[RMDB]
Chemical mapping of a 177-nucleotide RNA with 2A3 and DMS.
The reactions ran in a buffer of 150 mM KOAc, 10 mM MgCl2 and 150 mM bicine (pH 8.5), at 24 C.
It was measured as part of the RMDB library OK1LIB.
DMS adducts were read by reverse transcription with MarathonRT.

RNA sequence: GGGAACGACUCGAGUAGAGUCGAAAAUCGAGGCCAUAUUGAAGAUACGGCGCUUACUUCGGUCAGGGUGCCUGAAGUCCUCGUUGACGACGUGCUUGUAUCUCCCGCUUGCGAGGCCGUCGCGAACAUGACAGGGCACAUUCGUGUGCCCUGUCAUAAAAGAAACAACAACAACAAC
Reactivity to 2A3 in 0.01 (KOAc 150mM, MgCl2 10mM, bicine 150mM(pH8.5), 24C), signal-to-noise 3, nucleotides 027 to 126: u110c040g000a020g000g000c040c050a080u080a050u160u300g150a080a050g070a080u160a090c070g050g000c030g000c020u030u130a140c000u030u140c060g000g100u020c030a060g050g130g000u060g040c000c010u040g010a010a000g130u060c000c030u010c020g030u000u110g030a060c020g010a010c050g040u050g000c040u030u050g050u060a090u050c040u000c050c000c000g030c080u110u070g060c040g020a050g030g010c010c000g010u020c010g000c010g030a040a030c050
Reactivity to DMS in 0.01 (KOAc 150mM, MgCl2 10mM, bicine 150mM(pH8.5), 24C), signal-to-noise 1, nucleotides 027 to 126: u000c060g000a020g000g000c040c070a170u000a140u080u010g010a100a170g060a120u000a040c180g000g000c010g000c020u030u030a130c000u030u000c110g000g000u010c010a230g000g000g080u000g020c000c000u000g010a000a080g000u000c000c000u000c080g020u060u020g000a270c000g020a080c050g080u040g000c000u000u010g010u010a040u010c050u000c070c030c040g010c240u000u000g090c000g000a030g010g000c000c000g000u000c010g000c030g000a070a040c110